[RMDB]
RNA sequence: GGGAACGACUCGAGUAGAGUCGAAAAAGCCACCGCUACGGCGGUGGCAAGUAGAAAAGUUGGUGCUUAGACCACGCCCUCUACCGUAAUCAUAGAUAAAUAGGCGAGUAUCAGUACGCUGAUACAAAAAACACUCACACGUUCGCGUGUGAGUGAACUAACGAAAUGAGUUCGCUCAUUUCGUUAGAAAAGAAACAACAACAACAAC
Reactivity to 2A3 in 0.01 (KOAc 150mM, MgCl2 10mM, bicine 150mM(pH8.5), 24C), signal-to-noise 4, nucleotides 027 to 156: a000g000c010c000a010c010c000g030c020u050a040c250g080g000c000g000g000u010g010g000c000a000a010g000u020a010g030a050a030a000a010g040u070u060g000g010u070g020c140u220u110a030g040a080c000c000a000c000g000c010c010c000u010c010u000a020c030c020g140u120a140a020u110c060a080u080a140g110a110u150a140a160a050u130a050g040g000c030g030a020g010u000a000u000c000a000g020u030a030c210g010c100u000g000a010u020a010c030a000a160a000a020a020a000c010a000c000u010c000a000c000a000c000g020u060u050c210g020c010g060u000g000u000g000a000g000u000g000a000a010
Reactivity to DMS in 0.01 (KOAc 150mM, MgCl2 10mM, bicine 150mM(pH8.5), 24C), signal-to-noise 1, nucleotides 027 to 156: a250g020c000c000a020c010c020g030c020u000a090c160g100g020c010g090g040u020g020g040c010a000a000g000u000a070g010a070a050a050a180g000u000u000g030g000u010g000c060u010u000a080g000a060c020c020a080c020g000c000c000c020u000c030u010a010c020c010g000u000a110a060u000c140a140u000a140g010a050u000a040a030a050u000a060g010g000c000g000a110g000u010a000u000c000a000g030u000a130c300g070c010u000g010a010u000a040c030a010a030a060a060a080a140c010a000c000u010c030a020c010a000c000g030u000u000c300g050c030g060u010g020u000g000a020g000u000g000a010a080
An RNA of 207 nucleotides, treated with 2A3 and DMS and read out base by base. For DMS the reverse transcriptase was MarathonRT. It was measured as part of the RMDB library M2RFPK. For 2A3 the reverse transcriptase was SuperScript II with manganese.